[RMDB]
RNA sequence: GGGAACGACUCGAGUAGAGUCGAAAACUUUGGUGAGGCCCUCUCUAGUAUAGCAAUCCACCAAGCAGGUGAUUUCACACAAUUCAGGUUCUCAUAGAAAAUGCGCCCUGACUUGACAGGUAUGGUCCCAUUUUAGUGCUUUCGAGCACUAAAAUGGAAAAGAAACAACAACAACAAC
Reactivity to 2A3 in 0.01 (KOAc 150mM, MgCl2 10mM, bicine 150mM(pH8.5), 24C), signal-to-noise 5, nucleotides 027 to 126: c020u060u060u090g070g000u050g030a050g040g030c010c000c000u010c000u000c020u020a090g030u040a040u040a080g020c020a000a080u030c030c000a010c010c000a050a010g050c060a050g020g060u040g060a120u020u090u090c030a040c000a000c010a070a040u070u040c020a040g000g050u100u010c020u000c020a060u070a080g150a060a150a030a010u080g020c030g040c000c000c000u000g030a050c020u040u030g000a030c020a040g030g040u100a070u090g060g000u040c020
Reactivity to DMS in 0.01 (KOAc 150mM, MgCl2 10mM, bicine 150mM(pH8.5), 24C), signal-to-noise 3, nucleotides 027 to 126: c050u000u040u010g010g000u000g000a160g000g000c010c040c010u000c050u000c060u010a140g030u000a100u030a070g000c090a080a070u000c050c040a050c050c030a030a100g000c110a100g010g020u020g010a110u010u010u000c070a060c050a130c070a040a120u000u000c050a040g000g000u000u010c040u000c010a080u050a130g010a050a070a090a050u000g000c110g000c300c000c000u010g000a030c040u000u000g020a110c070a040g020g000u000a000u000g010g000u020c030
Source information: Source: RMDB library OK1LIB, as collected in RNAgym. Chemical mapping of a 177-nucleotide RNA with 2A3 and DMS. As a SHAPE reagent, 2A3 marks flexible, mostly unpaired nucleotides at the ribose 2'-OH. The reactions ran in a buffer of 150 mM KOAc, 10 mM MgCl2 and 150 mM bicine (pH 8.5), at 24 C.